[RMDB]
RNA sequence: GGGAACGACUCGAGUAGAGUCGAAAACCAGACACAAACUAUUUCUUCCCCAGGGCAGUAUUUCCCAAUUAUCCCUUCCUGUCAUCAUCACCUUCUUGUCCGUGCUCAUCAGCAUCUCAGACAAGUUAUAGGAUCAAACAUUCGUGUUUGAUCCUAUAAAAGAAACAACAACAACAAC
Reactivity to 2A3 in 0.01 (KOAc 150mM, MgCl2 10mM, bicine 150mM(pH8.5), 24C), signal-to-noise 2, nucleotides 027 to 126: c020c000a010g090a040c100a010c040a040a260a040c070u120a160u110u150u030c020u040u050c010c000c000c000a000g010g010g010c010a020g030u100a120u010u040u010c010c000c000a020a090u150u070a070u080c010c000c010u020u020c010c010u010g010u020c010a030u000c000a010u040c010a060c030c000u060u030c000u000u060g030u010c010c020g020u020g020c000u030c040a180u030c010a070g020c000a040u030c010u030c070a040g020a080c010a040a000g000u000u000
Reactivity to DMS in 0.01 (KOAc 150mM, MgCl2 10mM, bicine 150mM(pH8.5), 24C), signal-to-noise 3, nucleotides 027 to 126: c000c020a170g010a070c110a100c100a100a060a110c090u020a070u010u010u020c060u010u010c010c010c010c040a110g000g000g000c040a060g010u000a050u010u000u010c010c010c000a100a100u000u020a100u000c020c010c010u020u000c020c020u010g010u000c060a060u020c050a060u020c020a030c060c060u000u010c020u000u000g000u000c000c160g010u020g000c020u000c120a060u040c070a070g000c040a050u000c040u000c180a110g000a040c110a020a060g010u010u000
Overview:
Chemical mapping of a 177-nucleotide RNA with 2A3 and DMS. For DMS the reverse transcriptase was MarathonRT. The RNA was probed in 150 mM KOAc, 10 mM MgCl2 and 150 mM bicine (pH 8.5) at 24 C. For 2A3 the reverse transcriptase was SuperScript II with manganese. Reactivities are given for positions 27 through 126.